An RNA of 177 nucleotides, treated with DMS and 2A3 and read out base by base. The RNA was probed in 150 mM KOAc, 10 mM MgCl2 and 150 mM bicine (pH 8.5) at 24 C. High 2A3 reactivity points to a flexible backbone, as in loops and unpaired stretches. For 2A3 the reverse transcriptase was SuperScript II with manganese.
RNA sequence: GGGAACGACUCGAGUAGAGUCGAAAAACAAGCUGCACGUGCGUGCGAGCAGUUUUCGUAAUCGCACGUUUCACGUAAAGACGCAACUCUACUCGAGAAAGCGAGUCACGCAGACAGCGUCAAGGAAUUCACCUAAAUACUUCGGUAUUUAGGUGAAAAAAGAAACAACAACAACAAC
Reactivity to DMS in 0.01 (KOAc 150mM, MgCl2 10mM, bicine 150mM(pH8.5), 24C), signal-to-noise 5, nucleotides 027 to 126: a090c200a140a100g020c000u000g020c300a030c000g030u000g020c040g020u000g010c010g000a020g010c130a100g010u010u000u010u000c140g000u000a070a120u010c010g020c020a040c010g000u000u020u010c020a030c040g020u000a060a210a040g010a200c060g000c070a090a010c000u000c000u000a000c000u000c010g000a020g000a030a070a100g010c030g010a100g030u000c090a040c080g000c060a100g000a080c150a080g010c010g030u010c080a050a110g000g010a090a120
Reactivity to 2A3 in 0.01 (KOAc 150mM, MgCl2 10mM, bicine 150mM(pH8.5), 24C), signal-to-noise 4, nucleotides 027 to 126: a000c100a070a040g050c040u080g030c060a010c030g020u010g000c000g000u000g020c030g000a020g000c080a070g020u090u040u180u300c060g050u090a090a110u040c000g000c010a000c000g000u050u120u110c030a020c020g020u040a070a050a060g070a020c050g000c070a020a060c000u000c000u000a010c000u030c000g000a000g000a000a000a010g000c010g010a020g090u080c030a010c090g030c030a030g080a240c060a060g050c000g020u030c040a060a030g120g020a030a090